Chemical mapping of a 207-nucleotide RNA with 2A3.
The 2A3 profile rests on 1,503 reads.
It was measured as part of the RMDB library M2RFPK.
Values cover nucleotides 27 to 156.

RNA sequence: GGGAACGACUCGAGUAGAGUCGAAAAGCUGCGUGAAACCUCGGUGUUUUCUUGGCUAACUUUCAGCGAGGUGAGGCAAGGCGGCAAAAAAAAGUUGGGAGCAGCAACGGCAAGCAAAAAAAAAGUUACAAGUUGCGAUGGUUCGCCAUCGCAACAAGGAAUCAUAUGUGUUCGCACAUAUGAUUCCAAAAGAAACAACAACAACAAC
Reactivity to 2A3 in 0.01 (KOAc 150mM, MgCl2 10mM, bicine 150mM(pH8.5), 24C), signal-to-noise 2, nucleotides 027 to 156: g000c020u050g000c010g070u110g060a120a010a000c000c000u000c030g030g060u010g030u000u010u030u020c070u080u110g070g000c040u030a060a020c020u060u040u060c010a000g040c010g030a020g000g000u020g020a060g010g070c040a040a040g070g000c030g020g030c020a050a030a000a040a040a040a000a000g090u090u040g020g010g000a050g040c000a000g010c010a020a030c050g030g010c030a050a020g000c080a030a050a040a050a050a020a050a000a000g010u020u020a020c040a130a110g000u000u000g000c010g000a000u000g000g020u040u080c110g040c050c000a000u000c000g000c000a000a000c000a000a000